This 177-nucleotide RNA was probed chemically with 2A3 and DMS. In probing experiments dimethyl sulfate is read out at A N1 and C N3, which are open when not base-paired. Values are in units of 0.01, from 0 to 300, in steps of 10. The 2A3 profile rests on 2,065 reads.
[RMDB]
RNA sequence: GGGAACGACUCGAGUAGAGUCGAAAAGAUUCUAUGUUCGCAUAGAAUCAAAGAACGCCGAAGCGCAGAGCCCAAGAUGGAGGAGACGGCGAACCACCAAAAAAACAGCGGUCUUCGGACCGCUGAACCUACCAUAUAUCUUCGGAUAUAUGGUAGGAAAAGAAACAACAACAACAAC
Reactivity to 2A3 in 0.01 (KOAc 150mM, MgCl2 10mM, bicine 150mM(pH8.5), 24C), signal-to-noise 1, nucleotides 027 to 126: g000a020u000u000c000u010a000u010g020u010u040c170g020c110a010u020a010g010a020a010u000c010a000a010a040g010a090a000c020g000c030c030g060a080a020g100c030g000c070a020g020a070g070c000c030c020a070a040g100a130u150g000g050a050g030g040a080g020a020c030g000g030c020g020a020a010c030c040a050c020c010a020a040a020a050a000a040a020c010a000g020c020g000g000u000c000u020u050c170g070g010a000c000c000g000c000u000g000a000a010
Reactivity to DMS in 0.01 (KOAc 150mM, MgCl2 10mM, bicine 150mM(pH8.5), 24C), signal-to-noise 2, nucleotides 027 to 126: g000a040u000u000c000u000a010u030g000u000u000c240g060c000a030u000a000g000a010a000u000c010a050a120a070g000a100a120c080g030c010c010g000a100a050g010c070g030c050a110g010a150g000c010c010c020a120a080g000a090u010g000g030a090g000g000a180g010a060c080g000g000c060g000a040a150c080c040a090c020c040a010a010a060a050a020a060a150c010a000g020c030g010g000u000c000u000u020c200g000g030a010c000c000g040c000u000g000a020a040